[RMDB]
RNA sequence: GGGAACGACUCGAGUAGAGUCGAAAAUGGGAGCACCAAGGUGAUGGAACAUGGCUGGUUUGCUUAGCGGGUUGGGCUGUAGGGUACACUAUGCUGGCCUGCCCACUCCAAGUUGAGAGUUGGGCCACAUUGAUACACGCUUCGGCGUGUAUCAAUGAAAAGAAACAACAACAACAAC
Reactivity to DMS in 0.01 (KOAc 150mM, MgCl2 10mM, bicine 150mM(pH8.5), 24C), signal-to-noise 3, nucleotides 027 to 126: u020g000g000g000a100g020c050a100c090c040a100a070g020g020u000g020a080u000g000g000a060a060c140a100u020g000g010c040u000g020g000u000u010u030g000c070u010u010a100g000c090g000g000g020u020u010g010g020g020c020u000g000u030a050g000g010g000u000a030c100a030c080u000a050u010g010c070u010g000g000c050c030u010g020c010c020c030a050c000u020c000c050a160a080g010u020u000g000a120g000a080g000u040u040g000g000g000c040c180a070
Reactivity to 2A3 in 0.01 (KOAc 150mM, MgCl2 10mM, bicine 150mM(pH8.5), 24C), signal-to-noise 4, nucleotides 027 to 126: u130g030g000g000a050g010c030a020c070c020a030a030g070g030u050g030a090u050g020g030a080a050c050a080u080g030g000c030u020g010g020u110u070u100g070c030u080u050a020g040c070g000g070g020u110u090g060g000g020c030u040g060u090a060g030g000g040u110a040c040a010c050u090a070u200g010c040u030g020g000c010c010u020g010c000c000c000a020c000u020c010c000a080a090g110u140u260g130a130g000a000g030u140u040g000g000g020c010c000a030
Source information: This 177-nucleotide RNA was probed chemically with DMS and 2A3. The reactions ran in a buffer of 150 mM KOAc, 10 mM MgCl2 and 150 mM bicine (pH 8.5), at 24 C. The data come from the RNA Mapping Database (RMDB), libraries RFM100 and RFMREP. For 2A3 the reverse transcriptase was SuperScript II with manganese.